[RMDB]
Overview:
Source: RMDB library TTRINS, as collected in RNAgym. Chemical mapping of a 177-nucleotide RNA with 2A3 and DMS. For 2A3, 4,778 sequencing reads were counted. Reactivities are given for positions 27 through 126. For DMS, 6,598 sequencing reads were counted.
RNA sequence: GGGAACGACUCGAGUAGAGUCGAAAAGAUAUGGACCUGCGUAACUGCGAGGAUCGUAUCGAUGCGUAACAUCAGUCGGAAACGACUGUGGCAUCGAUACGGGAGCAGGAAAAGCAGGUCCUAAGUCCAUAAACAUUUUCUUCGGAAAAUGUUUAUGAAAAGAAACAACAACAACAAC
Reactivity to 2A3 in 0.01 (KOAc 150mM, MgCl2 10mM, bicine 150mM(pH8.5), 24C), signal-to-noise 2, nucleotides 027 to 126: g050a010u170a090u240g000g000a020c000c000u010g020c010g030u030a070a060c000u020g000c010g110a300g060g000a000u000c010g000u000a020u020c000g000a010u000g050c060g180u200a100a130c100a300u300c010a020g020u020c000g050g040a150a100a110c020g000a000c000u000g000u000g020g000c000a000u020c030g000a010u000a010c000g000g000g000a010g030c020a000g030g000a030a070a000a000g000c000a000g050g010u000c000c000u000a000a010g000u000c020
Reactivity to DMS in 0.01 (KOAc 150mM, MgCl2 10mM, bicine 150mM(pH8.5), 24C), signal-to-noise 4, nucleotides 027 to 126: g020a100u010a300u000g020g000a010c000c010u000g000c000g000u010a140a300c010u000g000c010g000a110g020g000a040u010c000g000u000a000u000c000g000a010u000g000c010g020u010a060a200c210a040u020c000a000g010u000c000g000g010a140a120a250c010g000a020c010u000g010u010g000g000c010a000u010c000g010a010u000a000c000g000g000g000a030g040c010a010g010g000a030a020a090a300g000c000a010g010g000u000c000c000u000a010a080g000u000c050